[RMDB]
RNA sequence: GGGAACGACUCGAGUAGAGUCGAAAAGCAUCCACUUUGAGAAUUUACCAUAGAUAGCUGGCGUUAAGUUGUAAUGUAGUAUAAAUCAUACAAUUCUUGUAGUACAUCAUAUAUAGCACUGAAUUACAAAGAGACGAACAUUCGUGUUCGUCUCUUUAAAAGAAACAACAACAACAAC
Reactivity to DMS in 0.01 (KOAc 150mM, MgCl2 10mM, bicine 150mM(pH8.5), 24C), signal-to-noise 3, nucleotides 027 to 126: g000c100a060u030c020c030a180c090u000u050u000g000a020g000a030a100u010u020u010a110c050c040a060u060a070g000a070u030a030g000c030u000g000g000c090g020u010u020a080a110g010u000u000g000u000a080a090u020g000u020a040g000u020a100u010a060a060a100u010c130a080u030a040c110a030a050u040u040c060u000u000g000u000a050g000u000a080c050a060u030c110a050u010a070u000a110u020a090g000c060a060c070u010g010a050a040u000u010a060c160